[RMDB]
Chemical mapping of a 170-nucleotide RNA with 2A3 and DMS. For 2A3 the reverse transcriptase was SuperScript II with manganese.
RNA sequence: GGGAACGACUCGAGUAGAGUCGAAAACUCCUUCCCCCCGCGGGCCCCCCAAUUCAGAGCCAAGAACCCACCCAUCGGGGUCCGACGUUCCUACCCUUUCUUACCUGUGGCCGGCAUGGUCCCAGCCUAACUCAGUACUUCGGUACUGAGAAAAGAAACAACAACAACAAC
Reactivity to 2A3 in 0.01 (KOAc 150mM, MgCl2 10mM, bicine 150mM(pH8.5), 24C), signal-to-noise 5, nucleotides 027 to 129: c030u060c000c000u000u030c010c010c010c000c020c010g040c010g000g020g000c000c000c000c010c010c000a000a020u110u080c040a060g040a030g040c020c020a070a020g030a030a040c020c020c010a040c030c020c000a060u110c050g010g000g000g000u020c010c000g020a040c000g030u020u020c030c010u020a040c000c000c000u020u090u010c010u040u080a100c000c000u040g000u060g030g000c020c020g050g070c070a060u160g040g000u010c020c000c000a000g000c010c010u040a060a020
Reactivity to DMS in 0.01 (KOAc 150mM, MgCl2 10mM, bicine 150mM(pH8.5), 24C), signal-to-noise 5, nucleotides 027 to 129: c100u030c020c020u030u020c030c020c000c030c020c070g000c020g000g080g000c040c010c040c000c140c130a040a010u030u030c010a110g050a120g040c060c040a100a100g030a050a060c050c000c020a000c040c030c020a000u030c100g020g050g040g020u060c040c060g000a100c000g020u040u020c050c000u030a140c060c000c030u000u000u000c040u000u000a050c020c020u000g010u040g000g050c000c050g040g080c050a040u000g050g020u030c040c020c010a080g000c120c060u050a060a180
Source: RMDB library 15KLIB, as collected in RNAgym. The RNA was probed in 150 mM KOAc, 10 mM MgCl2 and 150 mM bicine (pH 8.5) at 24 C. For DMS the reverse transcriptase was MarathonRT.